Conditions: 150 mM KOAc, 10 mM MgCl2 and 150 mM bicine (pH 8.5), 24 C. An RNA of 207 nucleotides, treated with 2A3 and DMS and read out base by base. DMS adducts were read by reverse transcription with MarathonRT. For DMS, 2,165 sequencing reads were counted.
RNA sequence: GGGAACGACUCGAGUAGAGUCGAAAAGAAAGUUGGAGAUAAGCACCAACUGUACAACCGUAAAUUGCGGGAAACCCCUAAAGCCUAUUCUACCGCGGCUAUGAGGAUGACUCAUAGUGCAGCAGGUGCGGAUAACGCCCACCGGAUGGUAAUAACGCCAUGAUAAACGGUUCGCCGUUUAUCAUGGAAAAGAAACAACAACAACAAC
Reactivity to 2A3 in 0.01 (KOAc 150mM, MgCl2 10mM, bicine 150mM(pH8.5), 24C), signal-to-noise 3, nucleotides 027 to 156: g020a010a140a000g010u000u010g010g020a060g000a190u120a170a000g040c010a020c020c010a010a010c010u030g010u020a050c080a050a020c010c000g010u050a110a140a300u230u300g000c000g030g000g000a090a080a080c020c000c000c010u060a170a000a000g010c000c020u080a100u110u000c040u050a040c040c070g000c000g010g000c010u010a000u000g000a000g040g050a100u260g100a070c000u000c000a000u000a010g000u030g110c020a000g000c010a010g000g010u030g010c130g010g010a030u070a180a060c100g040c000c000c030a020c020c000g060g000a080u070g030g040u040a050a080u050a090a010c080g010
Reactivity to DMS in 0.01 (KOAc 150mM, MgCl2 10mM, bicine 150mM(pH8.5), 24C), signal-to-noise 2, nucleotides 027 to 156: g020a110a070a020g000u000u000g000g000a070g000a100u000a040a100g010c050a150c010c000a030a020c000u020g000u000a090c050a050a180c000c000g000u000a090a200a140u010u000g010c000g000g030g000a100a080a190c030c000c050c160u000a090a020a080g000c000c020u000a050u000u010c040u010a110c000c010g040c030g040g000c000u020a010u010g000a020g000g000a230u010g000a300c000u000c010a020u010a020g020u000g030c070a030g040c020a100g030g040u010g000c000g000g000a210u000a080a070c110g000c020c040c000a080c060c010g000g000a150u010g020g020u010a060a130u020a060a120c010g000